[RMDB]
Overview:
Structure probing data (DMS and 2A3) for a 177-nucleotide construct. Reactivities are given for positions 27 through 126.
RNA sequence: GGGAACGACUCGAGUAGAGUCGAAAAGAAGAGCCGGGCUAACAAAGGUGGGAGGCACCCAACCCUUCGCAAGAGCCGAGUGGGAAGGCUAAGCGAAACCAAGAGAAAAUGGUUAUAAAUAAUGCAAAGGAAAAACAUUAUUCGUAAUGUUUUUCCUAAAAGAAACAACAACAACAAC
Reactivity to DMS in 0.01 (KOAc 150mM, MgCl2 10mM, bicine 150mM(pH8.5), 24C), signal-to-noise 3, nucleotides 027 to 126: g000a090a110g010a130g020c000c040g000g000g020c030u010a090a100c120a060a090a110g000g010u000g000g020g000a110g020g000c050a060c030c020c010a040a130c070c030c030u000u000c020g010c000a050a130g030a040g020c020c010g000a120g020u000g000g000g020a140a150g000g010c020u000a040a220g000c030g020a010a030a040c010c020a030a080g000a150g010a030a090a050a080u010g000g000u000u000a110u000a030a050a090u000a030a050u010g010c110a070a070
Reactivity to 2A3 in 0.01 (KOAc 150mM, MgCl2 10mM, bicine 150mM(pH8.5), 24C), signal-to-noise 3, nucleotides 027 to 126: g050a020a020g030a000g040c070c000g030g020g000c030u050a130a040c030a090a090a010g020g010u050g030g020g000a070g020g030c040a040c000c000c010a010a080c010c030c000u030u010c040g010c060a110a130g030a000g240c020c020g010a030g040u180g020g080g020a070a020g000g000c000u020a030a010g000c000g010a030a010a000c020c000a070a010g070a000g040a100a100a020a100u050g020g000u060u040a110u040a120a130a040u230a050a060u110g050c060a130a070
Conditions: 150 mM KOAc, 10 mM MgCl2 and 150 mM bicine (pH 8.5), 24 C.